[RMDB]
RNA sequence: GGGAACGACUCGAGUAGAGUCGAAAAGACUGUGCCGCCGACGUCGUGCUGACGACGUCGCAAGCCGAAACGCGGGUCAGGGCCACGAUAGCUACACAUGGGGCGUCUGUAACUACGCCGGUCAUAGCAAACAUUAACUCUUCGGAGUUAAUGUUUGAAAAGAAACAACAACAACAAC
Reactivity to 2A3 in 0.01 (KOAc 150mM, MgCl2 10mM, bicine 150mM(pH8.5), 24C), signal-to-noise 9, nucleotides 027 to 126: g050a010c050u050g040u100g070c030c030g030c030c010g010a010c000g000u000c000g010u030g140c170u180g160a020c000g000a000c000g000u000c000g000c010a010a010g030c010c020g050a080a070a010c070g010c020g030g010g010u050c040a060g020g020g020c000c010a030c020g040a060u040a070g020c030u070a030c040a010c010a130u130g040g000g040g020c010g030u020c030u050g110u030a060a050c060u070a030c050g020c020c030g030g040u080c040a050u080a050g060
Reactivity to DMS in 0.01 (KOAc 150mM, MgCl2 10mM, bicine 150mM(pH8.5), 24C), signal-to-noise 8, nucleotides 027 to 126: g000a090c040u010g010u030g010c020c050g020c290c020g010a010c020g020u000c010g020u010g010c230u050g010a050c010g010a010c000g020u010c010g010c150a110a110g020c010c040g010a070a080a080c110g010c050g000g000g000u010c040a070g000g000g010c000c020a060c070g000a070u020a080g000c030u010a050c080a060c100a080u020g010g010g010g000c020g010u000c060u020g010u030a060a100c090u010a060c050g000c020c020g000g020u010c040a090u010a110g000
Structure probing data (2A3 and DMS) for a 177-nucleotide construct. It was measured as part of the RMDB library OK1LIB. For DMS, 26,370 sequencing reads were counted. For 2A3, 17,000 sequencing reads were counted. Conditions: 150 mM KOAc, 10 mM MgCl2 and 150 mM bicine (pH 8.5), 24 C. For DMS the reverse transcriptase was MarathonRT.